[RMDB]
RNA sequence: GGGAACGACUCGAGUAGAGUCGAAAAUCCCAGCCAGGGGUUAUCCUCCUCAAGUCUCUUGAUAGUCUUGUUGACCUUCCGGAGGUCCCUCUCGAGCUCCUCCUUUCUUCUUCUUGCAUCGAUCCACAAACGAGAUUGUUCGCAAUCUCGAAAAGAAACAACAACAACAAC
Reactivity to DMS in 0.01 (KOAc 150mM, MgCl2 10mM, bicine 150mM(pH8.5), 24C), signal-to-noise 9, nucleotides 027 to 129: u030c020c000c010a060g030c100c070a070g000g000g010g020u030u030a110u070c040c000u030c000c000u020c030a110a150g050u000c020u020c010u010u020g000a040u030a050g000u010c030u000u000g020u020u030g000a080c010c030u010u000c090c080g000g000a080g030g020u000c050c000c030u010c010u000c030g040a050g000c100u020c020c010u030c000c050u000u060u000c030u030u000c000u000u000c020u000u000g020c040a070u020c060g000a080u030c010c020a100c120a030a100a150
Reactivity to 2A3 in 0.01 (KOAc 150mM, MgCl2 10mM, bicine 150mM(pH8.5), 24C), signal-to-noise 9, nucleotides 027 to 129: u000c000c000c000a000g060c020c030a030g020g040g020g010u080u100a090u110c010c000u020c010c000u050c030a090a180g150u010c010u000c000u030u020g010a030u040a030g020u010c010u040u110g070u050u100g040a050c010c000u060u060c050c040g100g020a020g010g010u020c000c000c000u010c000u020c010g040a020g010c030u020c010c000u030c000c000u030u060u050c000u040u000c000u020u000c000u020u050g010c010a060u030c030g060a060u010c020c020a090c050a100a090a020